This 177-nucleotide RNA was probed chemically with 2A3 and DMS. For 2A3 the reverse transcriptase was SuperScript II with manganese. For DMS the reverse transcriptase was MarathonRT. The 2A3 profile rests on 1,057 reads. The data come from the RNA Mapping Database (RMDB), library OK2TST. Reactivities are given for positions 27 through 126. Conditions: 150 mM KOAc, 10 mM MgCl2 and 150 mM bicine (pH 8.5), 24 C. For DMS, 947 sequencing reads were counted.

[RMDB]
RNA sequence: GGGAACGACUCGAGUAGAGUCGAAAAUCCUCGACAUCCUCCAGGACCUGCAUGGCGAGGAUCUCAAGGAGACGGUUCAAGAGUGCUACGAACUUUCUGCGGAGUAUGAGGGGAAGCAUGACCCUCAGGUGCCUAUCUCGUUCGCGAGAUAGGCACCAAAAGAAACAACAACAACAAC
Reactivity to 2A3 in 0.01 (KOAc 150mM, MgCl2 10mM, bicine 150mM(pH8.5), 24C), signal-to-noise 1, nucleotides 027 to 126: u060c000c000u010c010g000a050c000a050u040c000c010u000c010c020a030g070g080a060c020c020u090g030c080a080u120g080g000c020g030a020g010g000a080u030c010u010c040a060a080g000g030a010g000a010c110g080g000u020u000c010a040a000g080a030g090u090g000c020u050a060c060g050a100a100c000u010u040u050c030u030g090c070g060g000a090g080u110a050u150g020a010g040g030g010g000a030a050g140c090a070u060g130a020c000c000c000u000c010a000
Reactivity to DMS in 0.01 (KOAc 150mM, MgCl2 10mM, bicine 150mM(pH8.5), 24C), signal-to-noise 1, nucleotides 027 to 126: u000c010c000u000c070g000a040c070a070u010c000c020u030c060c080a120g000g000a060c090c040u000g000c100a060u000g000g030c020g000a000g010g000a060u000c090u010c020a090a080g020g000a060g010a160c060g000g000u000u000c050a010a080g000a140g010u000g020c080u010a090c100g000a050a050c040u000u000u000c020u000g010c050g030g030a130g020u000a170u030g000a050g020g010g010g020a080a130g000c080a120u000g000a150c010c000c000u000c050a010